[RMDB]
RNA sequence: GGGAACGACUCGAGUAGAGUCGAAAAUAAUGAGAUUUAUUUAGAAACUUGAGCGGAUGAGUUAGUGUUUCCAACGCAUAUUAGCUUCUAUAUGAAUACGUGCGAUAGCUUACGCGCAAAGUAACAAGGGUAAUUUAUUCUUCGGAAUAAAUUACCCAAAAGAAACAACAACAACAAC
Reactivity to DMS in 0.01 (KOAc 150mM, MgCl2 10mM, bicine 150mM(pH8.5), 24C), signal-to-noise 2, nucleotides 027 to 126: u010a010a000u000g000a100g010a120u030u000u030a020u000u000u010a130g020a110a100a070c020u000u000g000a110g030c020g010g000a090u040g030a140g020u000u000a080g010u000g000u000u000u000c010c020a040a140c100g000c040a000u020a100u030u000a070g010c130u030u010c040u030a070u030a090u030g000a020a080u000a050c180g020u000g000c040g010a090u030a060g000c140u000u010a060c040g030c060g000c080a070a030a100g020u000a060a070c140a080a110
Reactivity to 2A3 in 0.01 (KOAc 150mM, MgCl2 10mM, bicine 150mM(pH8.5), 24C), signal-to-noise 3, nucleotides 027 to 126: u100a010a090u140g070a050g070a180u070u050u030a100u080u030u050a090g020a030a130a000c000u010u010g020a010g010c000g090g090a140u050g010a090g040u100u070a020g000u050g080u080u050u050c010c030a020a010c010g030c050a000u040a070u080u090a040g060c050u030u030c000u110a170u010a000u190g070a080a020u050a050c010g030u070g040c000g050a020u070a070g030c050u030u030a020c020g060c000g000c050a080a080a000g050u050a110a050c130a070a080